[RMDB]
RNA sequence: GGGAACGACUCGAGUAGAGUCGAAAAAUGGUAAGAAGUAGACCGACUGACUAGCCUAUAAACACCCGUUAAAUCGCUAAGAUACGUCAAAAAAGCCCUUAACUAUGGCACUAGUUAGGGGCUUUGGUCAAGCAAUCCCAUUCGUGGGAUUGCUUGAAAAAGAAACAACAACAACAAC
Reactivity to 2A3 in 0.01 (KOAc 150mM, MgCl2 10mM, bicine 150mM(pH8.5), 24C), signal-to-noise 1, nucleotides 027 to 126: a020u100g000g020u030a090a090g010a020a030g120u080a060g090a080c030c030g010a000c010u030g050a020c000u030a000g000c000c010u120a070u250a130a000a060c000a000c020c020c000g000u060u060a000a000a080u010c090g000c150u000a000a080g030a010u080a040c050g130u080c110a170a000a000a000a000a000g000c030c000c000u000u000a000a000c000u040a040u040g210g020c000a030c060u010a000g000u000u000a000g000g010g000g020c000u000u000u000g000g000
Reactivity to DMS in 0.01 (KOAc 150mM, MgCl2 10mM, bicine 150mM(pH8.5), 24C), signal-to-noise 2, nucleotides 027 to 126: a070u030g010g000u030a060a070g020a130a080g030u000a110g000a030c040c050g020a150c070u010g010a050c050u000a130g000c020c050u040a130u020a030a090a110c080a080c000c000c000g050u010u000a010a020a030u000c030g000c180u040a040a060g010a060u000a010c000g000u030c080a000a010a020a000a010a000g010c000c000c000u000u000a000a000c000u000a020u010g000g010c150a060c180u020a000g000u000u000a000g010g000g010g000c020u000u000u000g000g010